RNA sequence: GGGAACGACUCGAGUAGAGUCGAAAAAUCAGUUAACGCACCAUAAUGUUCCAAAUAACCUACUAAAUCUGGAUAGAAUUGAAUGGAGCGAACGCUAGUAUCAGCAUUACGAGAUACGUAUGCAGUACCAAAUAGAUGUUUUCGAACAUCUAUUUGGAAAAGAAACAACAACAACAAC
Reactivity to 2A3 in 0.01 (KOAc 150mM, MgCl2 10mM, bicine 150mM(pH8.5), 24C), signal-to-noise 9, nucleotides 027 to 126: a000u070c020a010g030u040u050a130a050c010g000c010a020c010c010a010u040a060a050u100g020u040u000c010c000a020a080a070u130a080a110c040c050u080a090c050u110a200a150a180u110c080u080g010g020a040u040a130g100a090a060u050u080g040a060a050u030g010g010a020g010c010g010a030a010c070g000c050u040a040g030u050a100u120c050a040g030c020a040u090u170a040c020g020a020g020a300u070a250c010g010u010a020u060g000c010a000g040u040a090
Reactivity to DMS in 0.01 (KOAc 150mM, MgCl2 10mM, bicine 150mM(pH8.5), 24C), signal-to-noise 8, nucleotides 027 to 126: a090u010c070a050g020u000u000a100a240c060g020c020a080c010c010a040u010a090a130u000g000u000u000c000c060a050a080a130u010a110a100c080c050u010a110c170u010a070a100a070u010c110u010g000g010a110u010a070g010a060a040u000u000g000a240a040u000g000g010a060g020c030g010a050a090c190g010c050u000a050g020u000a040u000c060a100g000c030a040u000u000a040c080g010a180g010a120u010a050c040g020u000a010u000g010c010a150g010u000a120

Chemical mapping of a 177-nucleotide RNA with 2A3 and DMS. The DMS profile rests on 10,181 reads. Conditions: 150 mM KOAc, 10 mM MgCl2 and 150 mM bicine (pH 8.5), 24 C. For 2A3 the reverse transcriptase was SuperScript II with manganese.